[RMDB]
RNA sequence: GGGAACGACUCGAGUAGAGUCGAAAAGAUAUGGAUUGCAACAGCUAUGGCCACCGAAGAACUCGGAAACGAGGGAGGUGGUAGACAUGCAAUCCUAAGUCAAAAGUUGCAUGUUCGCAUGCAACAAGUAUAGCCAGAUCUUCGGAUCUGGCUAUACAAAAGAAACAACAACAACAAC
Reactivity to 2A3 in 0.01 (KOAc 150mM, MgCl2 10mM, bicine 150mM(pH8.5), 24C), signal-to-noise 2, nucleotides 027 to 126: g050a030u060a060u150g000g020a000u000u000g000c020a150a120c000a300g070c100u270a160u300g250g030c020c000a010c030c000g220a300a100g070a220a040c000u000c000g020g000a060a040a030c010g000a010g030g040g060a080g000g000u010g000g030u000a000g000a020c030a000u030g000c020a000a000u000c000c000u000a050a000g070u030c110a000a070a020a260g010u000u000g010c000a010u000g030u100u170c300g000c090a020u000g000c000a000a010c000a000a010
Reactivity to DMS in 0.01 (KOAc 150mM, MgCl2 10mM, bicine 150mM(pH8.5), 24C), signal-to-noise 2, nucleotides 027 to 126: g000a010u000a290u000g030g000a020u000u000g010c000a040a130c160a200g050c050u010a080u020g030g020c010c000a000c000c000g020a070a140g010a100a270c000u000c010g020g010a040a020a110c000g020a010g030g000g000a090g020g060u000g020g020u000a000g000a080c110a110u000g010c000a020a000u000c000c000u000a010a100g000u010c070a120a060a090a130g020u010u000g010c020a000u000g000u000u040c170g000c000a010u000g000c000a010a000c000a040a090